Structure probing data (2A3) for a 207-nucleotide construct. For 2A3, 898 sequencing reads were counted. Conditions: 150 mM KOAc, 10 mM MgCl2 and 150 mM bicine (pH 8.5), 24 C.
[RMDB]
RNA sequence: GGGAACGACUCGAGUAGAGUCGAAAAGUUACAGUUCGCUGUAACAAAAAGAUAUGGACUCAGAACUACUUCGGACCUUCCGACGAAGCAUUCGGAAACGAAUGCAGAGGAAGAAGAAGCUGAGUCCUAAGUCAAAAAAUCGGCGUUCGCGCCGAAAUCGACAAAACAACUUCGGUUGUUUUGUCGAAAAAGAAACAACAACAACAAC
Reactivity to 2A3 in 0.01 (KOAc 150mM, MgCl2 10mM, bicine 150mM(pH8.5), 24C), signal-to-noise 2, nucleotides 027 to 156: g000u000u000a000c000a000g020u050u090c150g080c120u000g000u000a000a010c050a000a170a110a020a000g020a040u050a020u060g000g010a000c000u000c010a000g000a100a080c110u190a040c010u230u010c000g130g060a150c050c000u000u020c030c050g260a280c030g020a180a010g020c000a000u000u000c010g010g050a080a070a010c030g000a000a000u000g000c000a000g020a010g110g000a010a040g000a020a050g000a000a000g010c000u000g000a000g000u000c000c000u000a000a000g000u000c000a090a000a020a050a070a100u080c000g010g000c000g050u100u110c130g020c020g000c120c010g000a020a000a010